Chemical mapping of a 177-nucleotide RNA with 2A3 and DMS. 2A3 is a SHAPE reagent: it acylates the 2'-hydroxyl of flexible nucleotides of all four kinds. For DMS the reverse transcriptase was MarathonRT. The RNA was probed in 150 mM KOAc, 10 mM MgCl2 and 150 mM bicine (pH 8.5) at 24 C.
RNA sequence: GGGAACGACUCGAGUAGAGUCGAAAACGCGCACUUUCACUGCAGCUCCAAUCGAGUUUGUAAUUGGUGCUAAACAAGCUGUUGAUGCAUUCAAUCAUCAAUUCAUGGAUGCACAUUUGAAGCUACCUCUGAUUCGAAAAUUCGUUUUCGAAUCAGAAAAAGAAACAACAACAACAAC
Reactivity to 2A3 in 0.01 (KOAc 150mM, MgCl2 10mM, bicine 150mM(pH8.5), 24C), signal-to-noise 9, nucleotides 027 to 126: c070g040c000g020c010a020c030u050u100u090c070a050c070u040g010c020a010g010c000u000c020c040a100a200u210c100g020a030g040u130u300u100g060u090a080a090u030u080g020g000u010g000c030u080a090a080a060c090a110a020g020c030u020g040u130u050g050a180u020g000c010a010u020u030c020a040a110u040c040a060u080c070a110a170u250u140c070a070u100g010g000a000u020g030c000a010c010a050u070u080u220g110a070a010g000c010u050a070c000c010
Reactivity to DMS in 0.01 (KOAc 150mM, MgCl2 10mM, bicine 150mM(pH8.5), 24C), signal-to-noise 6, nucleotides 027 to 126: c140g010c130g010c030a020c010u010u030u040c150a070c110u010g030c040a040g030c020u000c010c170a110a150u030c180g000a030g020u010u040u010g010u000a060a060u010u020g010g010u000g020c000u020a080a080a100c130a060a040g000c020u000g000u010u000g010a140u000g000c030a020u000u010c040a010a090u020c120a110u030c220a070a110u030u030c200a110u020g000g000a000u000g000c010a030c060a060u010u020u010g000a100a030g000c000u000a110c130c070